Structure probing data (DMS and 2A3) for a 177-nucleotide construct. The RNA was probed in 150 mM KOAc, 10 mM MgCl2 and 150 mM bicine (pH 8.5) at 24 C.

RNA sequence: GGGAACGACUCGAGUAGAGUCGAAAAGCUAUAUGAACUGGUUGAGGCCAUGGUGGAGAAGGGCCAGGAUGGUUCCGCUGUGCUUGAGCUUGACCUUUGCAACCGUGAUGUCUCGCGUAUUACAUUCCAAUUAGCUUCAAUUCGUUGAAGCUAAUUGAAAAGAAACAACAACAACAAC
Reactivity to DMS in 0.01 (KOAc 150mM, MgCl2 10mM, bicine 150mM(pH8.5), 24C), signal-to-noise 9, nucleotides 027 to 126: g010c070u000a080u010a080u010g010a090a100c120u000g020g010u000u010g010a070g000g010c030c030a020u000g010g020u000g000g020a220g010a060a060g010g010g010c030c010a030g000g010a070u010g010g000u000u010c040c170g010c090u000g020u000g010c030u000u000g000a130g010c020u000u000g010a080c020c010u000u000u000g010c110a130a040c030c020g010u000g000a110u010g010u000c020u000c020g010c080g010u010a060u000u010a090c130a110u000u000c060
Reactivity to 2A3 in 0.01 (KOAc 150mM, MgCl2 10mM, bicine 150mM(pH8.5), 24C), signal-to-noise 7, nucleotides 027 to 126: g000c020u040a020u020a060u300g080a110a080c070u120g090g110u180u190g040a030g030g000c010c010a020u040g030g000u030g010g120a120g020a060a040g040g010g010c050c020a010g060g010a030u120g050g000u090u090c070c070g040c090u140g030u070g090c010u040u070g020a030g040c000u010u060g040a060c000c000u030u020u050g020c050a030a020c010c010g020u020g020a070u150g020u000c010u020c030g020c010g010u050a070u080u140a060c070a080u070u060c030

About this RNA: It was measured as part of the RMDB library OK2TRN. The DMS profile rests on 38,819 reads.